[RMDB]
RNA sequence: GGGAACGACUCGAGUAGAGUCGAAAAACCUCUCCCGGUGUCUCUUCUCUCGCUUCCUCCCUCCUCAUUUUGCUCCUGAUCAUUUCUGCCAAGGGAGUCUGAGCCCUUGGGUUGAAGAAGCAUUUCCGAAGUAUGAUAGCUUCGGCUAUCAUACUUCAAAAGAAACAACAACAACAAC
Reactivity to DMS in 0.01 (KOAc 150mM, MgCl2 10mM, bicine 150mM(pH8.5), 24C), signal-to-noise 1, nucleotides 027 to 126: a120c050c000u020c050u000c040c020c010g020g040u000g020u010c020u000c040u000u000c030u000c030u000c090g030c090u000u010c040c030u000c030c020c040u000c010c020u010c030a050u010u010u000u000g000c020u000c020c020u010g000a100u000c070a110u010u010u000c080u000g020c020c010a010a040g000g000g010a100g020u000c130u010g010a130g010c000c000c010u000u000g010g010g020u000u010g000a080a070g000a040a060g010c120a080u000u000u000c070c080